[RMDB]
RNA sequence: GGGAACGACUCGAGUAGAGUCGAAAAAAGUGAGUGCAAUUGCCAGGAGAUGGAAGCCAGCCUGAACUUGCCCUAUUAUUCCUCCUGUUUUGACUAUUGAUAGAUGCAAUAAGGUGUUGAUGGGUUUUGCGCUAGAUGUGCUAAAUAACUUGGCUAACAGACAACAACGUUUCGACGUUGUUGUCUGAAAAGAAACAACAACAACAAC
Reactivity to 2A3 in 0.01 (KOAc 150mM, MgCl2 10mM, bicine 150mM(pH8.5), 24C), signal-to-noise 1, nucleotides 027 to 156: a000a000g130u100g060a090g000u000g000c040a070a080u140u050g080c000c000a030g010g000a070g000a040u090g100g140a100a010g020c000c010a000g110c000c000u040g000a020a000c030u020u040g040c020c000c000u020a090u090u060a040u080u040c010c000u030c000c040u070g130u090u010u000u150g070a040c010u030a070u090u080g040a060u020a170g020a020u030g020c000a040a000u070a130a190g000g000u060g020u060u050g040a110u100g010g010g000u050u060u140u020g000c020g010c000u000a000g030a040u160g020u060g000c030u030a000a060a100u060a110a000c000u090u050g000g000c000u020a040a000
Reactivity to DMS in 0.01 (KOAc 150mM, MgCl2 10mM, bicine 150mM(pH8.5), 24C), signal-to-noise 2, nucleotides 027 to 156: a020a040g030u000g010a090g000u000g030c030a100a120u010u000g000c030c020a080g010g020a110g020a120u010g000g020a130a170g010c010c030a120g010c020c050u000g000a060a050c060u010u000g000c020c040c000u000a040u000u000a150u000u000c020c040u000c010c040u020g000u000u000u000u000g020a060c030u000a170u000u000g030a110u000a060g010a080u000g000c030a050a090u000a080a030g010g030u000g040u000u030g010a080u010g010g010g040u000u000u000u010g050c050g000c070u000a090g040a060u000g050u030g010c040u000a030a050a080u000a060a100c030u010u000g000g040c030u010a110a280